RNA sequence: GGGAACGACUCGAGUAGAGUCGAAAAGUGGACGAUUUUCGGGGAAGGUCUCCCAAGAAGAACCAGGAACACCCCAAGAAGAGGAGACUUCCCCAAGGGUAGGUGGAACGCCAGGGAACAAGGAAAUAUAUCUCUUCCUUCGGGAAGAGAAAAAGAAACAACAACAACAAC
Reactivity to 2A3 in 0.01 (KOAc 150mM, MgCl2 10mM, bicine 150mM(pH8.5), 24C), signal-to-noise 2, nucleotides 027 to 129: g100u080g000g000a020c010g010a050u030u000u060u180c050g060g000g040g000a000a030g020g060u000c020u020c000c000c000a020a010g040a020a000g000a020a060c000c010a000g020g010a040a040c000a070c010c010c000c000a010a020g060a030a040g060a090g000g000a000g000a030c000u050u020c030c000c020c010a020a010g030g000g000u040a030g010g090u060g040g040a010a020c000g000c010c010a010g000g010g000a000a020c000a150a000g050g030a000a080a000u120a050u020a040
Reactivity to DMS in 0.01 (KOAc 150mM, MgCl2 10mM, bicine 150mM(pH8.5), 24C), signal-to-noise 1, nucleotides 027 to 129: g000u000g000g050a090c230g030a000u040u020u020u020c110g100g000g000g000a000a000g000g000u030c000u000c000c000c030a170a090g060a070a110g000a090a110c100c120a140g020g010a000a000c090a170c000c040c040c040a080a110g010a100a090g060a200g030g000a040g000a060c010u020u000c050c000c000c060a010a050g020g040g070u050a030g060g000u040g030g090a050a040c150g070c100c070a060g020g000g050a020a120c110a110a050g000g000a040a060a040u010a090u020a090